[RMDB]
Description
The record gives the reactivity of an RNA of 207 nucleotides to DMS and 2A3. 2A3 is a SHAPE reagent: it acylates the 2'-hydroxyl of flexible nucleotides of all four kinds. For 2A3, 2,972 sequencing reads were counted. Reactivities are given for positions 27 through 156. Conditions: 150 mM KOAc, 10 mM MgCl2 and 150 mM bicine (pH 8.5), 24 C.
RNA sequence: GGGAACGACUCGAGUAGAGUCGAAAAGAAGGGUGAAAGCCCUUGAUACUGUAGUGGAAAUUAUAAAUAAGAAGAGUUCUGAGUUGCUUAAGCAUAACUAAAAUAAAAAGACAAGCAUUAUUACAAACAUGGCGAGGUAAGUUCGCUUACCUCGCAACACAUAACCUUAGUUCGCUAAGGUUAUGUGAAAAGAAACAACAACAACAAC
Reactivity to DMS in 0.01 (KOAc 150mM, MgCl2 10mM, bicine 150mM(pH8.5), 24C), signal-to-noise 2, nucleotides 027 to 156: g000a050a010g000g030g040u000g010a250a140a260g010c020c010c000u000u010g000a150u000a020c040u000g010u000a060g040u000g030g010a140a060a100u010u000a000u010a020a120a150u010a050a190g000a150a130g010a160g000u000u010c020u020g010a150g030u000u000g010c050u000u000a070a070g020c060a070u000a050a080c010u000a010a060a010a060u010a020a040a140a140a240g010a080c010a050a000g040c010a020u020u000a040u010u020a060c150a020a050a070c040a040u000g000g030c000g050a010g070g020u000a000a040g010u000u010c290g030c020u000u000a000c000c010u000c020g000c000a010a060
Reactivity to 2A3 in 0.01 (KOAc 150mM, MgCl2 10mM, bicine 150mM(pH8.5), 24C), signal-to-noise 4, nucleotides 027 to 156: g050a000a000g000g020g010u020g040a070a030a010g030c010c000c000u000u010g020a040u040a070c070u050g060u100a030g030u030g020g060a050a020a050u160u080a110u180a200a070a010u140a040a050g030a040a010g030a020g070u070u050c090u120g050a050g080u100u040g040c030u120u130a120a020g020c000a050u060a130a040c020u040a040a040a030a080u140a030a100a020a000a000g070a050c060a020a000g000c000a000u000u040a010u040u080a080c100a050a040a010c010a040u050g110g010c010g000a000g000g000u000a000a010g010u020u080c120g000c080u000u000a000c000c000u000c000g000c000a000a000